[RMDB]
RNA sequence: GGGAACGACUCGAGUAGAGUCGAAAAGCAAAUAUUGUCUUAAUUACUUAGGCUAAAAGAAAUAAGUAUUAAAGCGGGGCAAGGCAUCGACAUUUGAUACAAAUAUUGAUCAAUGGAUGUCUUAUUUAAACCUCAUCCGGCUUCGGCCGGAUGAGAACAAUAUAUGCCACUUCGGUGGCAUAUAUUGAAAAGAAACAACAACAACAAC
Reactivity to DMS in 0.01 (KOAc 150mM, MgCl2 10mM, bicine 150mM(pH8.5), 24C), signal-to-noise 1, nucleotides 027 to 156: g000c020a100a090a140u000a100u020u000g030u000c010u000u030a030a170u000u000a030c010u010u000a080g050g000c050u000a060a070a170a210g000a110a150a070u000a020a030g000u010a000u010u000a070a000a110g060c040g020g010g030g090c150a000a080g010g000c000a000u000c020g000a100c020a040u000u000u050g020a030u000a230c040a100a060a160u000a080u000u000g000a040u000c030a090a030u000g010g000a090u000g000u000c010u000u000a090u010u000u000a030a040a090c060c010u000c000a030u010c000c000g010g000c000u000u010c300g030g000c000c010g010g020a000u000g000a000g020a070a030
Reactivity to 2A3 in 0.01 (KOAc 150mM, MgCl2 10mM, bicine 150mM(pH8.5), 24C), signal-to-noise 2, nucleotides 027 to 156: g030c020a060a110a060u150a080u120u120g010u000c000u130u140a200a150u100u050a090c020u010u060a020g050g000c020u100a210a070a000a040g020a010a130a020u060a140a010g010u050a060u070u160a070a070a090g050c080g000g020g010g010c020a020a000g000g000c000a000u010c010g110a150c020a040u090u060u100g070a040u110a100c040a030a230a000u160a150u190u250g010a000u000c000a000a000u000g050g010a000u000g010u000c000u010u020a030u010u140u050a030a080a040c010c000u020c000a000u000c020c020g010g010c010u060u030c180g040g010c000c000g010g000a000u000g000a000g000a000a000

This 207-nucleotide RNA was probed chemically with DMS and 2A3. For 2A3 the reverse transcriptase was SuperScript II with manganese. For DMS, 1,819 sequencing reads were counted. For DMS the reverse transcriptase was MarathonRT.